[RMDB]
RNA sequence: GGGAACGACUCGAGUAGAGUCGAAAAGAUAUGGAGGGACGCAACAGCUGCUUGUCGGAAACGACAAGGCAGACAUGCGUUUUCCUAAGUCAAAAGCAAACACUCCACUUCGGUGGAGUGUUUGCAACUGAUAGCAAACGUUCGCGUUUGCUAUCAGAAAAGAAACAACAACAACAAC
Reactivity to DMS in 0.01 (KOAc 150mM, MgCl2 10mM, bicine 150mM(pH8.5), 24C), signal-to-noise 3, nucleotides 027 to 126: g000a030u000a240u010g010g010a040g020g020g000a010c010g020c000a030a060c240a270g000c000u000g000c010u020u010g010u000c000g000g000a100a070a170c010g000a010c010a010a050g020g000c000a010g000a030c060a140u000g010c000g020u000u010u010u000c000c000u000a070a150g000u000c030a090a080a190a140g000c000a000a000a010c000a010c000u000c000c010a000c000u000u010c180g020g020u000g000g000a000g010u000g010u000u000u000g010c010a010a020
Reactivity to 2A3 in 0.01 (KOAc 150mM, MgCl2 10mM, bicine 150mM(pH8.5), 24C), signal-to-noise 1, nucleotides 027 to 126: g010a020u060a050u180g010g030a040g010g100g010a010c000g000c000a010a140c070a300g090c000u000g010c000u010u000g000u000c010g000g030a080a040a030c010g010a000c000a020a030g230g000c000a000g030a070c010a050u050g000c030g010u000u030u050u000c000c010u020a050a000g040u010c030a050a060a000a150g000c000a000a010a030c000a000c000u030c000c000a020c020u080u180c300g040g000u000g000g000a000g000u000g000u000u010u000g000c010a000a000